[RMDB]
RNA sequence: GGGAACGACUCGAGUAGAGUCGAAAACAUACCGGUCAUGAUCAAUCUGUGGCGGAACUGGAACAUCAGGAACCCCCUUUGGCAUGCAGCCUUUCUGCUGCUCUAUACUUCAGAAAAGAUGAUGCCGUCAUAGUGUUAGCUUCGGCUAACACUAUGAAAAAGAAACAACAACAACAAC
Reactivity to 2A3 in 0.01 (KOAc 150mM, MgCl2 10mM, bicine 150mM(pH8.5), 24C), signal-to-noise 4, nucleotides 027 to 126: c010a010u130a060c020c020g030g050u090c030a010u060g060a100u070c040a060a040u020c080u080g040u050g040g020c010g060g000a060a050c040u050g010g040a070a050c020a070u100c030a040g070g110a110a120c030c010c010c000c040u010u070u060g020g000c010a030u100g030c000a010g000c020c030u030u090u030c010u040g010c010u000g000c000u020c010u020a090u060a100c030u040u050c020a010g020a040a070a020a010g000a010u020g010a010u010g000c000c000g010
Reactivity to DMS in 0.01 (KOAc 150mM, MgCl2 10mM, bicine 150mM(pH8.5), 24C), signal-to-noise 5, nucleotides 027 to 126: c100a120u010a090c120c020g000g010u000c050a030u000g000a070u000c100a060a190u000c050u000g020u000g000g030c060g010g010a100a100c070u000g010g000a090a070c070a050u000c050a050g000g020a070a150c040c010c010c030c070u010u000u000g000g010c010a060u010g010c030a040g010c050c050u000u010u010c010u000g010c030u010g000c060u010c150u000a070u000a140c020u000u000c020a020g010a010a020a030a050g010a070u000g000a040u000g010c000c020g010